[RMDB]
Structure probing data (2A3 and DMS) for a 177-nucleotide construct.
RNA sequence: GGGAACGACUCGAGUAGAGUCGAAAACUACCCCACUUCCCCUCAGCAGAGCCUAGAGUAAAGGGGCCAGGCCUCCUCCCCAAUGGGAGAGAGAUGUGUUUGAAGAAGGAGCCUCACUCGGGCUGGCUCAAAGUCCACAGUUCGCUGUGGACUUUGAAAAAGAAACAACAACAACAAC
Reactivity to 2A3 in 0.01 (KOAc 150mM, MgCl2 10mM, bicine 150mM(pH8.5), 24C), signal-to-noise 2, nucleotides 027 to 126: c010u110a090c010c020c000c020a020c000u020u020c010c000c000c000u090c020a060g000c010a020g010a000g210c010c000u270a110g000a000g020u090a080a140a160g000g000g000g000c010c000a040g000g010c020c010u010c000c000u000c010c020c000c030a190a190u300g000g030g000a010g010a010g000a000g010a070u060g110u030g020u050u220u190g120a130a150g060a000a040g100g020a080g000c000c000u010c000a030c000u010c010g000g000g000c000u050g000g000c000
Reactivity to DMS in 0.01 (KOAc 150mM, MgCl2 10mM, bicine 150mM(pH8.5), 24C), signal-to-noise 2, nucleotides 027 to 126: c110u010a160c030c000c000c030a170c140u010u000c020c030c030c040u010c180a080g000c070a090g010a010g030c000c000u010a060g000a030g020u010a040a030a160g020g000g000g000c030c020a130g010g000c000c000u000c050c000u000c000c000c020c300a190a100u060g020g000g010a010g000a090g000a030g020a060u040g010u030g010u000u030u020g000a070a090g020a060a210g030g020a120g000c010c000u000c050a020c030u030c000g020g000g010c060u000g020g000c050
DMS adducts were read by reverse transcription with MarathonRT. The DMS profile rests on 2,450 reads. Values cover nucleotides 27 to 126.